[RMDB]
Notes: An RNA of 177 nucleotides, treated with DMS and 2A3 and read out base by base. DMS adducts were read by reverse transcription with MarathonRT.
RNA sequence: GGGAACGACUCGAGUAGAGUCGAAAAGAUAUGGAUUUCUAGCGGGAGCGUAGGAUCGGAAACGAUCCGAAACGCUUUGAUCGCUAAGAAAUCCUAAGUCAAAGAUGAGAACCUUCGGGUUCUCAUCCCAUUGUAACAUGUUCGCAUGUUACAAUGGAAAAGAAACAACAACAACAAC
Reactivity to DMS in 0.01 (KOAc 150mM, MgCl2 10mM, bicine 150mM(pH8.5), 24C), signal-to-noise 9, nucleotides 027 to 126: g000a020u000a220u010g000g000a010u000u000u000c000u000a020g020c010g020g000g010a010g020c000g030u000a300g000g000a010u000c000g010g000a040a040a110c000g010a010u000c000c000g000a060a140a110c000g020c000u000u000u010g000a050u000c010g010c010u000a040a110g000a010a010a010u000c000c000u000a000a080g000u000c020a110a120a200g000a020u000g000a020g000a010a010c000c000u000u010c290g030g010g010u000u000c000u000c000a000u000c000
Reactivity to 2A3 in 0.01 (KOAc 150mM, MgCl2 10mM, bicine 150mM(pH8.5), 24C), signal-to-noise 4, nucleotides 027 to 126: g020a010u060a030u120g000g000a010u000u020u000c010u010a000g000c020g000g080g050a050g010c000g010u020a090g020g000a000u010c010g010g000a050a030a010c010g000a000u020c030c010g000a010a010a000c000g010c000u060u020u020g050a050u050c000g000c030u050a030a040g000a000a010a000u000c000c000u010a040a010g010u010c050a200a110a140g000a000u020g000a000g000a000a000c020c000u080u160c300g090g000g000u000u000c000u000c000a000u000c000
Background
2A3 adducts were read by reverse transcription with SuperScript II with manganese. The RNA was probed in 150 mM KOAc, 10 mM MgCl2 and 150 mM bicine (pH 8.5) at 24 C. The data come from the RNA Mapping Database (RMDB), library TTRDES. For 2A3, 25,550 sequencing reads were counted.